[RMDB]
RNA sequence: GGGAACGACUCGAGUAGAGUCGAAAACAACACGUCUUCGGACGUGUUGAAACGUGGUGCGUACGAUAACGCAUAUAAAGCCCAAGACAAGCAGCGCAAAAAAAACAACCAGCUUCGGCUGGUUGAACAAGUAUUUUCUGUUCGCAGAAAAUACUUGAAAAGAAACAACAACAACAAC
Reactivity to 2A3 in 0.01 (KOAc 150mM, MgCl2 10mM, bicine 150mM(pH8.5), 24C), signal-to-noise 2, nucleotides 027 to 126: c000a000a010c000a000c000g000u000c010u040u070c210g130g010a000c000g000u000g000u000u000g000a010a010a000c010g030u040g090g000u010g060c020g000u010a010c010g030a080u030a110a010c010g000c010a000u030a010u020a070a040a020g050c020c010c010a020a020g070a040c050a060a020g030c040a040g020c050g040c120a070a020a000a000a030a000a010a130c000a010a000c000c010a000g010c000u030u100c150g110g000c000u000g020g000u000u000g000a000a000
Reactivity to DMS in 0.01 (KOAc 150mM, MgCl2 10mM, bicine 150mM(pH8.5), 24C), signal-to-noise 4, nucleotides 027 to 126: c010a010a000c000a000c000g010u000c000u000u010c170g020g010a010c010g030u000g020u010u000g020a030a080a180c030g000u000g010g040u000g000c000g000u000a030c030g030a090u010a020a020c020g010c000a020u000a090u010a080a100a140g000c030c000c020a090a100g000a080c070a060a070g000c080a050g010c090g030c070a000a000a000a030a070a050a090a180c020a020a020c000c000a010g000c000u000u000c220g010g020c000u000g000g000u000u000g010a050a070